An RNA of 207 nucleotides, treated with 2A3 and DMS and read out base by base. Conditions: 150 mM KOAc, 10 mM MgCl2 and 150 mM bicine (pH 8.5), 24 C. Source: RMDB library RSTRND, as collected in RNAgym.
RNA sequence: GGGAACGACUCGAGUAGAGUCGAAAAACGCGAAAGCGUGGUCUAGCGAACCAAUUAGCCUGCUUGAUGCGGGCAAUUGAUGACAGAAAAGCUACCCUAGGGAUAACAGAGUCGUCACUCGCAAGAGCACAUAUCGACCGAGUGGCUUGCUACCUCGGAUGAAAGUACACUUCGGUGUACUUUCAUCAAAAGAAACAACAACAACAAC
Reactivity to 2A3 in 0.01 (KOAc 150mM, MgCl2 10mM, bicine 150mM(pH8.5), 24C), signal-to-noise 3, nucleotides 027 to 156: a000c040g010c010g060a140a030a040g000c040g010u040g000g040u040c060u050a020g010c000g010a020a030c000c020a000a000u000u010a070g000c020c000u010g030c030u070u280g150a120u290g030c030g000g000g030c000a000a000u010u000g010a050u080g050a040c050a070g170a060a110a000a010g000c020u030a050c000c000c040u090a060g050g070g000a060u110a210a120c050a060g100a010g120u070c040g000u020c000a000c020u000c000g020c030a020a040g010a000g070c090a030c020a200u300a090u030c020g000a010c030c010g000a000g000u000g000g030c000u000u070g000c000u030a040c000c050u050c050g040
Reactivity to DMS in 0.01 (KOAc 150mM, MgCl2 10mM, bicine 150mM(pH8.5), 24C), signal-to-noise 2, nucleotides 027 to 156: a020c040g020c010g010a180a040a150g220c000g010u000g020g010u000c040u010a140g030c030g020a100a070c000c010a000a070u000u000a150g040c010c000u010g000c010u010u010g050a180u010g090c000g000g010g030c000a000a000u000u000g000a030u010g000a280c060a140g000a000a040a110a190g000c000u010a140c000c020c020u030a130g000g020g020a050u000a010a070c030a180g000a160g000u000c040g000u010c050a060c050u000c020g030c080a020a270g000a020g000c070a100c210a100u000a180u010c020g010a200c160c010g000a060g060u000g000g160c040u000u010g000c000u000a060c000c000u000c010g010